RNA sequence: GGGAACGACUCGAGUAGAGUCGAAAAAUCUGAUUUUUACUUCGAGCUGCAAAACCAGCAGGAGCGGUAUGACCGUGCCACACUGGAGCGCAUCCGCCGUAUGCAGAACGAUCCGUACAGCGAAGUCCCUGCGAAAUGGUUUCGACCAUUUCGCAGGAAAAGAAACAACAACAACAAC
Reactivity to 2A3 in 0.01 (KOAc 150mM, MgCl2 10mM, bicine 150mM(pH8.5), 24C), signal-to-noise 3, nucleotides 027 to 126: a000u040c070u030g110a110u010u150u050u170u130a050c010u070u020c000g000a000g000c010u030g040c070a020a060a140a170c020c040a000g010c000a060g040g010a030g000c030g000g060u090a170u250g080a070c000c010g080u050g070c010c020a130c010a020c130u050g040g000a070g020c040g000c000a100u000c010c080g030c020c000g020u050a010u070g000c040a000g030a100a040c010g050a080u010c060c020g080u050a020c070a010g060c040g040a010a000g070u060c020
Reactivity to DMS in 0.01 (KOAc 150mM, MgCl2 10mM, bicine 150mM(pH8.5), 24C), signal-to-noise 1, nucleotides 027 to 126: a070u020c070u060g040a110u000u000u030u030u000a000c010u000u000c000g000a010g000c010u000g080c010a040a090a100a200c160c000a000g000c240a170g050g070a220g000c110g000g030u000a110u020g060a050c010c040g160u020g000c000c000a040c020a300c050u000g000g090a020g000c180g090c020a160u000c000c070g000c000c070g050u010a000u000g040c220a000g090a060a100c160g030a110u000c010c000g090u010a010c040a100g010c000g010a010a130g000u000c010